[RMDB]
Structure probing data (2A3 and DMS) for a 177-nucleotide construct. For 2A3, 6,361 sequencing reads were counted.
RNA sequence: GGGAACGACUCGAGUAGAGUCGAAAAGAUCUCGGCUUUCUGCAACCUCCGCCUUCUGGGUUCCAGCGAUUCUCCUGCCUCAGCCUCUCAAGUAGCGGGGAUUACAGGCUCCCACCGCCAUGCCCAGCCUUCUCUUAUAUUUCGAUAUAAGAGAAGGAAAAGAAACAACAACAACAAC
Reactivity to 2A3 in 0.01 (KOAc 150mM, MgCl2 10mM, bicine 150mM(pH8.5), 24C), signal-to-noise 3, nucleotides 027 to 126: g030a050u040c020u010c050g050g000c040u030u130u050c050u120g030c010a070a090c010c000u020c040c030g040c020c010u070u060c030u070g060g030g000u040u060c040c020a020g020c040g060a030u080u020c010u010c030c020u030g030c020c010u030c000a010g010c000c000u040c010u020c070a080a090g030u050a020g100c050g010g020g010g000a000u020u120a070c040a030g010g070c030u030c010c010c000a020c000c010g000c020c010a030u050g000c000c000c020a030g030
Reactivity to DMS in 0.01 (KOAc 150mM, MgCl2 10mM, bicine 150mM(pH8.5), 24C), signal-to-noise 6, nucleotides 027 to 126: g000a090u000c020u000c030g010g010c040u000u000u010c040u010g010c060a070a120c060c010u000c040c050g020c040c030u000u000c050u000g000g010g010u000u000c060c030a070g020c060g000a080u000u000c030u000c020c030u000g010c020c020u000c060a100g020c030c010u010c040u000c070a060a080g010u010a070g020c040g010g010g010g010a080u010u000a060c120a070g010g010c070u000c030c010c010a090c080c040g000c020c030a060u000g010c010c000c030a180g000